[RMDB]
RNA sequence: GGGAACGACUCGAGUAGAGUCGAAAAAGCCAAUCCUUCGGGAUUGGCUACAGCAACGAAGCAAAGCAACGAGACAAGACGACCAAAAGAUCGAGCAUGCUACACACCCCAUCUUCGGAUGGGGUAACCCAUGGGUAUAAUUCGUUAUACCCAUGGGAAAAGAAACAACAACAACAAC
Reactivity to DMS in 0.01 (KOAc 150mM, MgCl2 10mM, bicine 150mM(pH8.5), 24C), signal-to-noise 6, nucleotides 027 to 126: a030g010c000c000a010a000u000c000c000u000u010c240g040g010g010a010u000u000g000g010c000u000a010c070a070g000c040a050a050c080g010a100a090g010c060a050a050a080g020c060a040a050c070g000a080g010a060c070a060a070g010a110c050g010a050c040c050a050a060a070a060g010a070u010c050g000a100g010c040a060u000g000c040u000a040c140a080c160a070c010c000c000c000a000u000c000u000u010c190g020g000a000u000g010g010g010g000u000a000a030
Reactivity to 2A3 in 0.01 (KOAc 150mM, MgCl2 10mM, bicine 150mM(pH8.5), 24C), signal-to-noise 5, nucleotides 027 to 126: a000g010c000c000a010a010u000c000c010u020u080c220g060g000g000a000u000u010g000g000c000u000a010c010a010g040c010a040a050c040g110a090a010g020c030a120a060a000g020c010a040a090c030g030a010g030a070c030a060a040g040a050c060g030a040c010c060a040a090a030a030g060a040u040c020g000a010g030c020a020u090g020c020u110a050c070a000c010a010c080c000c000c000a000u010c010u040u070c180g060g000a000u000g010g000g000g000u000a000a000
An RNA of 177 nucleotides, treated with DMS and 2A3 and read out base by base. The DMS profile rests on 7,140 reads. Conditions: 150 mM KOAc, 10 mM MgCl2 and 150 mM bicine (pH 8.5), 24 C. DMS adducts were read by reverse transcription with MarathonRT. For 2A3, 15,633 sequencing reads were counted.